[RMDB]
RNA sequence: GGGAACGACUCGAGUAGAGUCGAAAAUUGCGUUCGCAACGCAUGCUCUGUGGAGUGACGAGGGGAGAGCGAAGACAUGGCUACACACGAUCACAUCCCUCAUUUCAUCUUUCGGGUCUUCAGCUUGCGCCUGAAACUAGUUCGCUAGUUUCAGGCGAAAAGAAACAACAACAACAAC
Reactivity to 2A3 in 0.01 (KOAc 150mM, MgCl2 10mM, bicine 150mM(pH8.5), 24C), signal-to-noise 1, nucleotides 027 to 126: u030u020g000c020g030u000u080c100g030c100a060a010c020g040c030a000u010g020c000u000c000u050g240u160g100g030a050g010u040g010a050c070g050a070g000g020g030g020a060g000a020g010c020g050a100a020g100a040c070a080u130g090g000c010u120a010c020a000c010a000c090g030a080u010c020a030c000a150u050c020c010c010u000c010a020u050u070u070c040a000u000c000u010u060u000c030g010g000g000u020c000u060u050c020a020g030c010u000u120g040
Reactivity to DMS in 0.01 (KOAc 150mM, MgCl2 10mM, bicine 150mM(pH8.5), 24C), signal-to-noise 1, nucleotides 027 to 126: u000u000g030c030g060u000u030c300g020c090a200a150c030g030c000a040u000g000c060u000c000u010g000u010g040g020a080g010u000g000a080c160g030a080g010g010g010g000a090g000a040g020c040g000a060a050g020a130c080a040u000g010g000c070u000a090c110a100c030a100c060g000a040u010c070a050c110a190u020c000c010c020u030c070a100u000u000u000c050a130u010c040u000u000u000c040g000g000g010u000c010u000u020c070a100g010c110u000u000g010

This 177-nucleotide RNA was probed chemically with 2A3 and DMS. The RNA was probed in 150 mM KOAc, 10 mM MgCl2 and 150 mM bicine (pH 8.5) at 24 C. Source: RMDB library RFMREP, as collected in RNAgym. The 2A3 profile rests on 1,232 reads. For DMS, 791 sequencing reads were counted. For 2A3 the reverse transcriptase was SuperScript II with manganese.